Chemical mapping of a 177-nucleotide RNA with DMS. Conditions: 150 mM KOAc, 10 mM MgCl2 and 150 mM bicine (pH 8.5), 24 C.
[RMDB]
RNA sequence: GGGAACGACUCGAGUAGAGUCGAAAAGGGGGUAAAGCAGAACACCGGCGACGGAUACUCAACGGUGUCCUCGGAUGCUCUUGAGGACCUCCCGCAAUGAUUCUCCGCCACUGCACGAUCAGCAAUAUGUUCUGUUCCUGUUCGCAGGAACAGAACAAAAAGAAACAACAACAACAAC
Reactivity to DMS in 0.01 (KOAc 150mM, MgCl2 10mM, bicine 150mM(pH8.5), 24C), signal-to-noise 1, nucleotides 027 to 126: g030g010g010g020g000u020a030a040a160g050c060a030g070a040a030c030a050c190c110g010g000c300g000a000c080g000g010a110u010a110c190u000c040a050a210c060g000g000u020g030u030c000c000u000c100g000g020a090u000g000c090u000c090u000u000g010a040g000g000a010c110c050u010c080c000c030g040c040a050a030u000g000a070u000u000c050u000c000c040g020c070c040a100c010u000g000c010a140c070g000a040u000c050a130g010c010a130a050u000a090

Reactivities are given for positions 27 through 126.